[RMDB]
RNA sequence: GGGAACGACUCGAGUAGAGUCGAAAAGAUAUGGACGCAUUGGUGGAGCUGGUGGUCGGAAACGACCACCCAGCGAUGAAACCACUGUGCGUCCUAAGUCAAAGUGUACCACUUCGGUGGUACACAAGGUCUAUCACAACUUCGGUUGUGAUAGACCAAAAGAAACAACAACAACAAC
Reactivity to 2A3 in 0.01 (KOAc 150mM, MgCl2 10mM, bicine 150mM(pH8.5), 24C), signal-to-noise 2, nucleotides 027 to 126: g010a010u020a020u050g000g000a000c010g010c030a040u130u300g120g000u060g000g070a210g040c000u000g040g000u010g000g020u010c020g000g020a000a010a000c000g010a010c020c010a000c030c030c010a000g000c040g060a040u250g150a080a130a030c000c000a000c030u030g020u010g010c000g010u000c000c000u010a000a000g010u020c030a040a090a080g020u030g000u000a000c010c030a000c000u070u070c260g080g030u010g030g020u000a000c020a000c020a000a050
Reactivity to DMS in 0.01 (KOAc 150mM, MgCl2 10mM, bicine 150mM(pH8.5), 24C), signal-to-noise 1, nucleotides 027 to 126: g000a000u000a010u000g000g000a000c000g010c000a000u000u020g080g000u000g000g010a150g040c030u000g000g040u000g000g000u020c000g040g000a010a010a030c010g030a000c000c000a000c210c070c040a020g030c000g000a120u020g020a100a140a120c000c000a000c050u000g000u000g010c000g000u010c000c000u000a010a040g000u000c000a140a110a200g020u000g010u010a010c000c000a000c010u000u020c290g000g010u000g000g010u000a000c000a000c020a050a060

Conditions: 150 mM KOAc, 10 mM MgCl2 and 150 mM bicine (pH 8.5), 24 C. Structure probing data (2A3 and DMS) for a 177-nucleotide construct. The data come from the RNA Mapping Database (RMDB), library TTRDES.